[RMDB]
RNA sequence: GGGAACGACUCGAGUAGAGUCGAAAAUUAAAGGAGGAGGAGGAGUGUGUGUCUUCCCAGCUGCUGAGUAGAACGUCCGCACACACGCGAAAGCUACGAGCAGCAGCAGUGCGGAAACGGUGAAAAACGCAUAAUUCUCGUUCGCGAGAAUUAUGCGAAAAGAAACAACAACAACAAC
Reactivity to DMS in 0.01 (KOAc 150mM, MgCl2 10mM, bicine 150mM(pH8.5), 24C), signal-to-noise 1, nucleotides 027 to 126: u000u000a040a080a050g000g000a110g000g000a070g000g010a050g010g020a020g000u000g030u000g010u010g010u010c140u000u000c040c020c040a230g020c030u000g000c000u000g030a130g030u000a050g040a100a110c130g010u000c030c000g000c010a080c140a150c190a090c180g000c020g000a060a110a100g000c030u000a040c100g000a070g030c030a030g020c130a100g000c010a080g030u000g000c090g000g010a070a030a050c050g000g000u000g000a030a040a060a080a130